[RMDB]
RNA sequence: GGGAACGACUCGAGUAGAGUCGAAAAAGUUAAAUAUCGUACGUUCAUAUUUGAACGUUCUGCCGGAAUGCAUUAUCAAUAGAGGUAAAGUCGCAACCCCAAAUCGUAAAGGAAACCGUAGCACGUCGACGAUAAGAUAGUUCGCUAUCUUAUCGUCAAAAGAAACAACAACAACAAC
Reactivity to 2A3 in 0.01 (KOAc 150mM, MgCl2 10mM, bicine 150mM(pH8.5), 24C), signal-to-noise 7, nucleotides 027 to 126: a000g070u100u100a090a100a050u170a100u110c070g010u030a010c000g000u000u000c030a040u110a240u300u200u150g000a000a000c000g000u010u000c020u040g020c010c020g050g040a100a030u080g010c030a040u060u070a050u150c040a040a190u060a160g070a060g070g030u060a060a030a040g040u060c020g000c040a060a050c020c000c010c010a000a040a080u090c040g080u110a060a030a040g060g040a090a040a000c030c010g020u020a010g020c040a010c070g060u060c070
Reactivity to DMS in 0.01 (KOAc 150mM, MgCl2 10mM, bicine 150mM(pH8.5), 24C), signal-to-noise 2, nucleotides 027 to 126: a070g000u010u010a040a060a070u010a090u000c070g000u000a020c010g020u000u000c000a060u010a180u010u000u000g010a010a010c010g010u000u000c030u010g020c060c040g000g010a100a070u010g010c050a070u000u000a070u010c090a070a080u000a100g010a090g010g010u000a030a060a080g000u000c060g000c050a070a130c040c010c010c050a050a060a060u010c080g020u010a050a050a110g000g010a050a040a070c060c040g010u010a040g010c060a060c100g000u000c110
The record gives the reactivity of an RNA of 177 nucleotides to 2A3 and DMS. It was measured as part of the RMDB library RFMREP. DMS (dimethyl sulfate) methylates the pairing face of unpaired adenines and cytosines. For DMS the reverse transcriptase was MarathonRT. The RNA was probed in 150 mM KOAc, 10 mM MgCl2 and 150 mM bicine (pH 8.5) at 24 C.